[RMDB]
RNA sequence: GGGAACGACUCGAGUAGAGUCGAAAACGAGGCGUCUGGUGUGCUGGUGGCCAAGGACAAGGCCAUCAAGCGCUUCAUCGUCAGGAACAUUGUGGAUGCGUCAGCCAUCCGCGAUAUUCAGGACUCCUCUAUAUGACCAGUUCGCUGGUCAUAUAGAAAAAGAAACAACAACAACAAC
Reactivity to 2A3 in 0.01 (KOAc 150mM, MgCl2 10mM, bicine 150mM(pH8.5), 24C), signal-to-noise 7, nucleotides 027 to 126: c050g020a070g020g010c030g020u090c130u100g030g020u060g030u070g040c010u010g010g070u020g020g000c010c030a100a090g120g010a090c090a140a120g010g000c010c010a000u010c020a040a010g010c000g010c000u030u020c010a040u050c020g020u000c010a020g090g030a020a010c010a020u020u010g010u020g000g000a000u010g020c030g180u220c110a030g070c090c000a000u000c000c000g000c000g000a000u020a040u030u020c010a010g050g040a030c020u010c010c010
Reactivity to DMS in 0.01 (KOAc 150mM, MgCl2 10mM, bicine 150mM(pH8.5), 24C), signal-to-noise 8, nucleotides 027 to 126: c190g000a040g000g010c030g020u010c080u010g010g020u000g010u010g020c010u000g010g010u000g010g010c020c030a090a130g010g010a090c240a130a180g000g000c000c000a010u000c010a010a060g020c000g000c010u000u000c020a070u010c100g010u010c020a040g010g000a010a010c040a010u000u000g020u000g010g010a010u000g010c050g010u010c240a120g010c180c010a000u000c000c010g010c000g010a010u000a030u000u000c010a060g000g010a050c030u000c020c030
The record gives the reactivity of an RNA of 177 nucleotides to 2A3 and DMS. 2A3 adducts were read by reverse transcription with SuperScript II with manganese. DMS adducts were read by reverse transcription with MarathonRT. Reactivities are given for positions 27 through 126. The reactions ran in a buffer of 150 mM KOAc, 10 mM MgCl2 and 150 mM bicine (pH 8.5), at 24 C.